[RMDB]
RNA sequence: GGGAACGACUCGAGUAGAGUCGAAAAGGCGAGGGUCUGGCGCGUCUGGGGGCGCACGACCCCGAGCGGCACCCCCGCGUGCAGCUGAAGCGGGACACGCGCGAGGCGUACGUGCCGCGACGCAACGCGUUCAGGGAGCGUGAGGGCCAGGAACCCGCUAGCUGUUAAAGUUCGCUUUAACAGCUAGAAAAGAAACAACAACAACAAC
Reactivity to DMS in 0.01 (KOAc 150mM, MgCl2 10mM, bicine 150mM(pH8.5), 24C), signal-to-noise 1, nucleotides 027 to 156: g000g050c040g000a060g020g010g030u000c010u000g010g010c070g040c030g000u010c090u000g030g050g030g000g000c030g030c080a090c060g020a050c020c020c010c000g000a130g030c080g030g000c000a070c000c060c010c000c000g010c020g030u010g000c070a180g000c040u000g000a130a140g010c020g040g040g000a110c060a040c020g000c000g060c080g000a140g000g030c140g020u080a030c060g030u000g020c000c000g000c040g000a020c060g020c040a080a090c040g010c010g060u010u000c070a190g000g020g020a160g000c070g020u000g000a220g000g060g020c010c000a220g000g010a050a090c010c000c000g000
Reactivity to 2A3 in 0.01 (KOAc 150mM, MgCl2 10mM, bicine 150mM(pH8.5), 24C), signal-to-noise 2, nucleotides 027 to 156: g100g020c060g000a100g010g030g010u030c020u020g040g000c020g000c000g040u000c030u090g050g010g000g000g010c090g000c070a140c120g130a180c000c000c000c000g000a020g000c000g050g000c000a030c000c000c000c000c000g000c020g030u060g020c090a110g020c010u130g090a190a040g010c000g020g150g070a110c030a040c050g090c010g020c080g050a090g120g000c030g050u160a080c040g010u050g030c000c000g000c000g000a010c000g000c010a100a020c040g010c000g020u070u070c070a090g010g110g000a020g030c040g000u040g020a130g040g120g000c000c000a020g010g010a020a050c010c010c000g000